[RMDB]
An RNA of 207 nucleotides, treated with 2A3 and DMS and read out base by base. 2A3 adducts were read by reverse transcription with SuperScript II with manganese. The reactions ran in a buffer of 150 mM KOAc, 10 mM MgCl2 and 150 mM bicine (pH 8.5), at 24 C. For DMS the reverse transcriptase was MarathonRT. Source: RMDB library OK3TST, as collected in RNAgym. For DMS, 3,487 sequencing reads were counted.

RNA sequence: GGGAACGACUCGAGUAGAGUCGAAAAAUAACAUGGCGUACGGAAACCAUCCGGACGUUGGCAGCAUGCGAAAGGAUGGUUAUGGCUGCCAUCCGAAACGUACGACCUUGUGGCAUGCGAAAGGAUGGUGUGCGACCUCGCGAUCAUACGAAGCUAGGUCAGAUUUAACAUUCGUGUUAAAUCUGACAAAAGAAACAACAACAACAAC
Reactivity to 2A3 in 0.01 (KOAc 150mM, MgCl2 10mM, bicine 150mM(pH8.5), 24C), signal-to-noise 5, nucleotides 027 to 156: a000u220a020a030c060a060u080g020g000c020g010u010a010c020g040g060a160a020a020c020c000a020u020c010c010g020g000a020c050g030u030u120g060g000c020a040g010c020a040u110g010c000g050a110a030a010g000g000a020u010g010g000u040u020a050u070g060g000c010u030g000c000c000a010u000c000c000g060a110a160a080c010g010u050a020c040g120a300c020c000u060u110g070u150g070g010c040a030u100g010c020g040a090a050a000g020g000a010u000g020g020u060g040u030g010c030g050a150c000c030u060c050g020c020g030a070u080c030a020u060a130c070g080a040a050g050c030u060a030g060
Reactivity to DMS in 0.01 (KOAc 150mM, MgCl2 10mM, bicine 150mM(pH8.5), 24C), signal-to-noise 2, nucleotides 027 to 156: a140u000a080a060c090a050u000g010g000c010g040u000a030c030g010g000a140a130a300c060c020a140u010c000c020g000g010a300c070g030u000u000g000g010c060a100g000c060a090u000g010c000g000a050a170a250g000g000a020u020g010g020u000u010a020u010g010g010c140u000g000c000c000a000u000c010c000g000a020a140a080c030g030u000a010c050g000a150c020c010u030u000g040u010g000g020c050a060u000g020c000g030a070a140a220g020g010a030u010g000g000u000g000u000g040c030g000a030c000c010u000c020g000c030g000a150u010c150a090u000a080c080g000a050a030g020c040u000a060g040